[RMDB]
RNA sequence: GGGAACGACUCGAGUAGAGUCGAAAAGUCAAGUAUGAUGAUUGGAGCCGAAUGGCCUAGAAAAUGCAUCCGUUCCGUCCUCGGAGAUGAUUGAGUAGCUGUCCCGGUCGGUGUCUCAGGUGGGACAAGUCCAUGCGUCUUUCGAGACGCAUGGACUAAAAGAAACAACAACAACAAC
Reactivity to 2A3 in 0.01 (KOAc 150mM, MgCl2 10mM, bicine 150mM(pH8.5), 24C), signal-to-noise 1, nucleotides 027 to 126: g030u030c050a030a030g090u050a070u140g000a000u000g000a000u000u260g210g110a070g000c070c050g110a150a200u250g180g000c000c000u000a000g100a040a140a000a050u200g030c010a130u000c000c000g070u110u000c100c000g070u000c020c000u040c000g000g000a100g000a030u010g030a070u090u000g000a000g050u050a040g100c030u120g030u060c030c000c000g000g050u020c000g000g030u070g070u050c010u000c010a050g090g110u140g090g000g000a010c020a000
The data come from the RNA Mapping Database (RMDB), library RFM100. An RNA of 177 nucleotides, treated with 2A3 and read out base by base. Reactivities are given for positions 27 through 126. 2A3 adducts were read by reverse transcription with SuperScript II with manganese. The RNA was probed in 150 mM KOAc, 10 mM MgCl2 and 150 mM bicine (pH 8.5) at 24 C.